Structure probing data (DMS and 2A3) for a 177-nucleotide construct. The 2A3 profile rests on 12,985 reads.
[RMDB]
RNA sequence: GGGAACGACUCGAGUAGAGUCGAAAACAGACCAAGUUCGCUUGGUCUGAAAGAAAGCGGAAAGCACCAGCGAGGGAAGGUGCGGGCCGCAACCACCCAUAAAAAGUACGAUCUUCGGAUCGUACAAGUAAUCCUAUUGCUUCGGCAAUAGGAUUACAAAAGAAACAACAACAACAAC
Reactivity to DMS in 0.01 (KOAc 150mM, MgCl2 10mM, bicine 150mM(pH8.5), 24C), signal-to-noise 2, nucleotides 027 to 126: c020a000g000a000c000c000a000a000g000u000u000c240g060c010u000u000g000g020u000c000u010g000a000a130a090g000a070a120a190g020c000g000g010a020a030a240g010c000a010c000c010a090g010c100g010a110g010g000g020a230a180g000g000u000g010c000g000g000g010c000c000g000c020a070a110c180c100a120c010c010c020a120u030a050a070a070a080a070g000u000a000c000g010a020u000c000u000u000c230g030g000a000u000c000g010u000a000c010a030a060
Reactivity to 2A3 in 0.01 (KOAc 150mM, MgCl2 10mM, bicine 150mM(pH8.5), 24C), signal-to-noise 5, nucleotides 027 to 126: c010a000g000a000c010c000a000a000g010u020u070c140g020c130u000u000g000g010u000c000u000g000a010a000a000g070a010a050a010g000c010g000g000a030a040a010g000c000a000c000c010a030g090c050g130a210g010g100g050a080a090g000g000u000g000c000g000g060g010c010c000g000c010a010a000c020c020a020c010c010c000a040u250a060a150a010a000a010g000u000a000c010g000a000u000c010u050u090c220g050g000a000u000c000g010u010a010c000a000a000
Conditions: 150 mM KOAc, 10 mM MgCl2 and 150 mM bicine (pH 8.5), 24 C. Source: RMDB library M2PK50, as collected in RNAgym.